[RMDB]
RNA sequence: GGGAACGACUCGAGUAGAGUCGAAAAUGUUGAAUUUUAUGAAGACCGCAUCUUGGACUUUAAAGUUCUUGAUAAUGGUAUCAUUAGGGAUGUAAAUCCUGAUGAUAAGUGCUUUGCUAAUAAGCACACAUCACACCCUUCGGGGUGUGAAAAAGAAACAACAACAACAAC
Reactivity to 2A3 in 0.01 (KOAc 150mM, MgCl2 10mM, bicine 150mM(pH8.5), 24C), signal-to-noise 3, nucleotides 027 to 129: u100g040u010u040g100a040a100u050u000u230u270a130u080g020a080a000g060a020c010c060g000c000a050u000c000u020u050g000g000a000c000u000u120u300a130a300a060g000u020u000c000u000u000g000a000u010a090a110u260g080g000u010a000u030c020a000u000u030a060g080g000g020a030u030g000u300a000a060a110u060c000c000u000g000a000u000g010a010u010a300a000g010u010g000c000u020u020u080g060c080u170a100a080u090a200a090g000c000a060c020a000c000a000
Reactivity to DMS in 0.01 (KOAc 150mM, MgCl2 10mM, bicine 150mM(pH8.5), 24C), signal-to-noise 2, nucleotides 027 to 129: u010g030u160u000g060a090a130u080u000u010u010a020u020g000a150a160g000a100c020c090g060c210a080u040c020u000u040g010g000a030c040u000u060u000a000a180a160g040u000u000c010u020u020g010a000u000a090a070u050g000g050u000a030u020c000a020u020u000a060g000g000g020a020u000g000u040a070a090a070u040c000c030u040g020a020u030g020a030u050a030a100g060u010g020c010u000u000u000g010c110u040a080a040u020a020a040g040c010a000c000a100c220a010